[RMDB]
Chemical mapping of a 207-nucleotide RNA with 2A3 and DMS. 2A3 adducts were read by reverse transcription with SuperScript II with manganese. Source: RMDB library OK3TST, as collected in RNAgym. DMS adducts were read by reverse transcription with MarathonRT. For DMS, 4,114 sequencing reads were counted. DMS (dimethyl sulfate) methylates the pairing face of unpaired adenines and cytosines. For 2A3, 6,294 sequencing reads were counted.

RNA sequence: GGGAACGACUCGAGUAGAGUCGAAAACAGACUCCGUCUCUGUCCGCUGUGUACGACAAGGAAAAACGGAUCCGUCUGCUGGAGGACGAGGUAGUGGAGCUUCGGAAACAGAAACUGGCUAAGUCUUCCGACAAGCUGACCAACUUCACCAACAUUCAUUCUUCGCAUUAUUCGUAAUGCGAAGAAUAAAAGAAACAACAACAACAAC
Reactivity to 2A3 in 0.01 (KOAc 150mM, MgCl2 10mM, bicine 150mM(pH8.5), 24C), signal-to-noise 7, nucleotides 027 to 156: c010a010g050a030c020u010c020c040g040u030c040u000c030u120g050u020c040c020g020c110u110g030u050g050u220a070c080g040a020c080a120a170g030g020a070a050a060a050a030c060g030g030a030u060c060c040g020u010c020u030g020c020u030g030g020a050g030g010a030c040g010a020g030g020u050a030g060u090g030g020a020g000c000u020u020c000g010g100a020a020a010c050a020g110a040a100a040c060u090g080g000c060u080a080a020g030u000c000u030u000c020c000g020a030c040a070a030g000c020u050g030a060c010c020a040a050c020u070u060c050a050c060c030a060a070c020a140u080u140c010
Reactivity to DMS in 0.01 (KOAc 150mM, MgCl2 10mM, bicine 150mM(pH8.5), 24C), signal-to-noise 2, nucleotides 027 to 156: c070a070g000a060c010u000c000c000g010u000c020u010c030u000g020u000c010c020g040c030u020g010u000g030u010a080c110g020a080c020a050a080g020g020a100a090a060a180a150c010g000g020a090u010c040c050g010u000c040u000g000c040u000g000g010a080g030g000a110c050g010a160g020g020u000a060g020u000g020g010a110g030c050u000u000c020g000g000a070a040a200c060a120g030a090a100a060c090u000g020g070c060u000a100a260g010u000c060u010u000c020c030g000a090c070a080a070g020c030u010g000a140c010c020a020a050c030u000u000c030a070c030c010a050a140c050a230u000u010c040